RNA sequence: GGGAACGACUCGAGUAGAGUCGAAAAAAAAAGCACAAAAGGAAGGAUAUCGUGCACGAGCAGCGUAUAAACUUCUUGAAAUUCAAGAAAAAUAUAAGUUGAUCAAGCCAGGCAUGACAGUGGUGGAUAUAAAUACCAUCUUCGGAUGGUAUUUAUAAAAAGAAACAACAACAACAAC
Reactivity to DMS in 0.01 (KOAc 150mM, MgCl2 10mM, bicine 150mM(pH8.5), 24C), signal-to-noise 5, nucleotides 027 to 126: a030a010a040a050a070g020c050a040c060a040a040a090a050g020g010a070a030g000g000a110u000a040u010c090g000u010g010c030a080c170g010a040g000c010a030g010c010g000u010a020u010a040a060a180c180u000u000c000u000u010g010a060a120a140u010u010c010a000a030g000a010a020a060a110a130u010a030u000a020a030g010u000u000g000a050u000c060a090a120g000c060c070a070g000g010c030a030u000g010a040c100a040g030u000g000g010u000g010g010a150
Reactivity to 2A3 in 0.01 (KOAc 150mM, MgCl2 10mM, bicine 150mM(pH8.5), 24C), signal-to-noise 2, nucleotides 027 to 126: a000a000a000a030a000g070c030a050c030a020a100a010a000g070g020a010a040g000g000a010u040a030u240c010g030u030g010c010a010c050g010a060g040c020a010g000c030g050u060a010u040a060a040a000c040u020u000c000u030u010g090a300a300a280u300u100c020a010a020g010a030a020a000a030a000u100a010u010a090a020g010u000u030g020a040u080c010a030a010g040c010c010a020g000g020c020a020u060g040a030c020a030g060u050g090g010u040g040g010a020
Structure probing data (DMS and 2A3) for a 177-nucleotide construct. DMS adducts were read by reverse transcription with MarathonRT. Values cover nucleotides 27 to 126.